[RMDB]
RNA sequence: GGGAACGACUCGAGUAGAGUCGAAAAAAAUGUUUCCUUAUAAUUUUACACAGGAAAUAAUACAAUGUUCACAAAGAAGUGAACAACAAACACUGGGGUCUACUUGAGGGUGGAGGUGGCAGGAGGGUGAGGAUUGGAAAACUACCUAUCAGGUACAGUCCCUAAAUAAUUUCGAUUAUUUAGGGACAAAAGAAACAACAACAACAAC
Reactivity to 2A3 in 0.01 (KOAc 150mM, MgCl2 10mM, bicine 150mM(pH8.5), 24C), signal-to-noise 1, nucleotides 027 to 156: a000a000a000u060g010u010u020u000c000c000u060u050a100u070a060a260u050u240u050u240a090c080a010c000a000g060g000a030a080a030u120a000a010u080a130c050a010a100u100g000u000u010c040a040c050a010a290a020g160a140a020g030u000g000a000a000c000a010a010c040a060a090a000c000a010c170u160g000g000g000g050u040c030u030a030c040u040u090g010a050g000g040g000u140g010g030a070g070g000u120g030g000c030a000g040g030a030g030g150g040u090g030a020g010g040a050u110u220g000g050a080a040a000a080c030u050a000c020c010u050a050u230c080a000g040g000u230a000c000a000